[RMDB]
RNA sequence: GGGAACGACUCGAGUAGAGUCGAAAAGAUAUGGAUCCCAGAAGUGCUUUGAUCAUUUGGUCGGAAACGACCACUGAUGGGAGCACAGGGAUCCUAAGUCAAACGAGGUUGGUUCGCCAACCUCGAACUCACAACCGUAGUUCGCUACGGUUGUGAGAAAAGAAACAACAACAACAAC
Reactivity to 2A3 in 0.01 (KOAc 150mM, MgCl2 10mM, bicine 150mM(pH8.5), 24C), signal-to-noise 2, nucleotides 027 to 126: g030a000u040a020u100g000g000a010u030c000c010c040a080g220a300a070g020u020g000c040u270u250u090g190a010u000c000a020u050u040u210g000g010u040c000g040g010a050a030a090c020g000a000c070c000a000c010u000g020a010u000g050g090g000a020g020c000a010c000a000g000g020g000a000u000c000c000u000a000a000g010u010c030a050a050a140c020g010a000g030g000u000u040g010g110u060u170c300g080c120c020a010a000c000c010u000c010g000a000a010
Reactivity to DMS in 0.01 (KOAc 150mM, MgCl2 10mM, bicine 150mM(pH8.5), 24C), signal-to-noise 1, nucleotides 027 to 126: g040a020u010a280u000g040g010a040u000c000c000c020a140g030a270a170g020u020g000c000u000u000u020g000a060u000c000a010u000u000u010g000g040u000c000g040g020a040a040a220c010g000a000c000c000a010c300u010g000a020u040g000g030g000a000g020c000a000c020a080g000g000g000a010u000c000c000u010a000a070g000u000c030a110a050a280c000g020a030g020g010u000u000g010g030u000u040c260g020c010c000a000a000c000c000u000c000g030a030a080